[RMDB]
RNA sequence: GGGAACGACUCGAGUAGAGUCGAAAAAAGGUGACCCGUGAUGGAGGCGGCCGGGAUAGCACAUAUCGAGUCGGAUAAUUGUGCAAGUUGAUCGCUUCGGCGGUUUAAUUUGGCGGUGCCAUCAGGAUUUACUCGCACAUUGUGGCCGUUCCCUCGGCCCCAAUAAGUCGUUCGCGACUUAUUGGGGAAAAGAAACAACAACAACAAC
Reactivity to 2A3 in 0.01 (KOAc 150mM, MgCl2 10mM, bicine 150mM(pH8.5), 24C), signal-to-noise 2, nucleotides 027 to 156: a000a000g090g020u050g040a090c010c020c020g020u020g010a010u030g000g080a070g110g060c060g090g000c010c010g070g000g020a130u140a050g020c010a010c000a020u030a030u040c090g080a100g240u150c070g020g010a030u000a010a120u190u030g000u000g000c000a000a000g070u070u080g050a010u000c010g010c080u000u030c130g000g010c020g010g040u010u040u150a070a030u050u100u190g060g000c080g090g000u050g050c000c000a020u040c000a000g020g020a010u050u030u210a100c040u100c080g060c040a080c070a090u060u180g020u080g030g000c000c000g000u010u000c010c000c000u000c030g050g000
Annotation
The data come from the RNA Mapping Database (RMDB), library ARCHII. Structure probing data (2A3) for a 207-nucleotide construct.